An RNA of 207 nucleotides, treated with 2A3 and read out base by base.
RNA sequence: GGGAACGACUCGAGUAGAGUCGAAAAGUGUAGCGUCACUUUGAUGGCGGUACUAUGAAUUGAUGCAAGGUGUGGAGCGACCUUAAACAGUUCUGGUGGUGCUCUGAAUGGAGUGCUCUACUGAUAUUUAACUUAUGCACGUUCGCGUGCAUAAGAACACGAUUCACCGGUUCGCCGGUGAAUCGUGAAAAGAAACAACAACAACAAC
Reactivity to 2A3 in 0.01 (KOAc 150mM, MgCl2 10mM, bicine 150mM(pH8.5), 24C), signal-to-noise 3, nucleotides 027 to 156: g110u060g010u050a080g150c000g040u040c010a050c080u190u150u280g250a300u120g010g000c020g020g040u050a030c040u030a050u070g050a050a020u090u050g080a070u060g100c030a020a020g000g000u030g010u080g020g040a000g010c010g030a020c010c030u070u150a090a040a000c000a000g000u010u010c040u040g010g000u040g020g010u000g000c010u000c000u030g080a060a040u220g010g000a030g020u010g020c030u010c010u050a100c030u030g060a070u010a100u110u110u060a090a000c000u000u000a000u000g000c000a010c000g030u040u020c110g010c020g060u000g000c020a000u000a000a000g000a020a010